[RMDB]
RNA sequence: GGGAACGACUCGAGUAGAGUCGAAAAGUGCGGCUUAAUUUGACUCAACGCGGGACAGCUUACCAGGCCCGACGGCCGGACGAGUGUUGUACACGAUAGGUCGAAGAGUGGUGCAUGGCCGUUACGAUGCCCGUCUAGUGUUCGCACUAGACGGGCAAAAAGAAACAACAACAACAAC
Reactivity to DMS in 0.01 (KOAc 150mM, MgCl2 10mM, bicine 150mM(pH8.5), 24C), signal-to-noise 1, nucleotides 027 to 126: g000u000g000c000g000g130c000u060u000a050a120u000u070u050g000a000c030u000c000a120a040c040g000c010g100g000g000a010c000a080g000c160u000u070a050c000c120a300g000g040c000c000c160g000a300c150g000g000c000c020g010g000a090c060g000a090g000u030g000u000u000g020u000a300c050a050c000g000a070u060a100g000g000u030c000g020a140a110g000a080g010u040g000g000u030g000c050a090u040g020g000c000c030g000u000u200a050c060g000a160
Reactivity to 2A3 in 0.01 (KOAc 150mM, MgCl2 10mM, bicine 150mM(pH8.5), 24C), signal-to-noise 1, nucleotides 027 to 126: g000u030g010c050g010g000c000u000u000a100a000u150u080u280g000a000c000u000c130a010a030c170g000c000g000g050g000a000c000a060g000c100u030u070a120c000c000a170g000g030c000c000c000g270a160c000g000g000c000c000g000g000a100c010g020a120g070u100g010u070u300g000u100a000c000a070c060g000a070u200a080g020g000u000c090g000a240a020g000a000g130u130g000g000u130g040c100a070u170g000g000c110c000g000u000u050a010c000g000a000

This 177-nucleotide RNA was probed chemically with DMS and 2A3. Conditions: 150 mM KOAc, 10 mM MgCl2 and 150 mM bicine (pH 8.5), 24 C. 2A3 adducts were read by reverse transcription with SuperScript II with manganese. DMS adducts were read by reverse transcription with MarathonRT.